[RMDB]
RNA sequence: GGGAACGACUCGAGUAGAGUCGAAAAGCUCUAGGAGACUAGAGCGAUACGUUAGAGAGCUCGUGGCAUGACUAACGGAUAGCCAGGUACGAGGUCGCCAGAGGACAUAGCUAUAGCUAUGUCCAAAGAGGAAUCAUACCUUCGGGUAUGAUUCCUCAAAAGAAACAACAACAACAAC
Reactivity to DMS in 0.01 (KOAc 150mM, MgCl2 10mM, bicine 150mM(pH8.5), 24C), signal-to-noise 2, nucleotides 027 to 126: g000c000u020c000u050a030g000g010a290g000a260c000u000a000g020a000g000c040g030a020u050a010c240g000u020u000a100g010a160g010a100g050c000u000c120g040u090g010g020c100a130u020g040a090c020u000a040a060c300g000g040a060u010a010g000c000c000a020g000g010u000a080c100g000a080g000g000u000c000g000c030c050a110g040a300g010g000a000c000a000u000a000g000c000u090a050u030a080g010c000u000a000u000g000u000c000c000a010a030a100
Reactivity to 2A3 in 0.01 (KOAc 150mM, MgCl2 10mM, bicine 150mM(pH8.5), 24C), signal-to-noise 2, nucleotides 027 to 126: g010c000u000c000u000a010g040g030a070g060a060c000u020a000g030a010g010c000g000a000u000a070c060g000u060u120a040g050a000g000a030g060c000u010c170g050u030g090g000c070a090u050g000a020c030u010a090a020c050g130g000a110u100a050g050c020c020a000g060g020u010a010c040g000a010g000g080u000c000g030c020c000a060g000a050g090g000a000c000a000u000a020g000c000u170a090u040a300g000c000u000a000u040g000u000c010c020a000a000a000
About this RNA: The record gives the reactivity of an RNA of 177 nucleotides to DMS and 2A3. The reactions ran in a buffer of 150 mM KOAc, 10 mM MgCl2 and 150 mM bicine (pH 8.5), at 24 C. Source: RMDB library OK1LIB, as collected in RNAgym. For 2A3 the reverse transcriptase was SuperScript II with manganese. The 2A3 profile rests on 1,125 reads. DMS adducts were read by reverse transcription with MarathonRT.